[RMDB]
RNA sequence: GGGAACGACUCGAGUAGAGUCGAAAAGGGAGACCCGAGCAGAGGCAUAGCGAACUGCGCACGGAGAAGCCUUGAGGGAAUGCCGUAGGACCCGGGUUCGAUUCCCGGCUGCUCCACCGAAGGGCCAGCUAUUAUCAUGCUUCGGCAUGAUAAUAGCAAAAGAAACAACAACAACAAC
Reactivity to 2A3 in 0.01 (KOAc 150mM, MgCl2 10mM, bicine 150mM(pH8.5), 24C), signal-to-noise 6, nucleotides 027 to 126: g070g020g000a070g050a050c000c010c010g010a040g000c050a010g020a040g050g000c040a070u180a090g050c030g070a070a080c070u080g010c030g000c030a020c100g080g000a100g040a090a010g020c000c000u050u060g040a070g010g010g040a030a090u060g030c000c030g030u060a060g010g100a030c010c010c000g000g000g010u060u070c040g020a070u030u050c000c000c000g010g000c010u030g010c010u010c010c010a050c000c020g020a040a050g010g000g010c010c010a010
Reactivity to DMS in 0.01 (KOAc 150mM, MgCl2 10mM, bicine 150mM(pH8.5), 24C), signal-to-noise 5, nucleotides 027 to 126: g000g000g030a160g000a160c040c000c000g000a170g000c060a070g000a070g020g000c050a100u030a080g040c050g000a080a100c040u010g000c050g060c070a120c130g000g020a060g000a090a230g020c050c010u000u020g010a250g020g000g000a030a040u030g000c020c000g000u010a090g010g000a110c080c060c030g020g020g030u010u020c140g010a240u030u010c000c000c040g000g000c080u000g000c050u020c030c050a180c090c070g010a140a090g000g000g020c050c100a060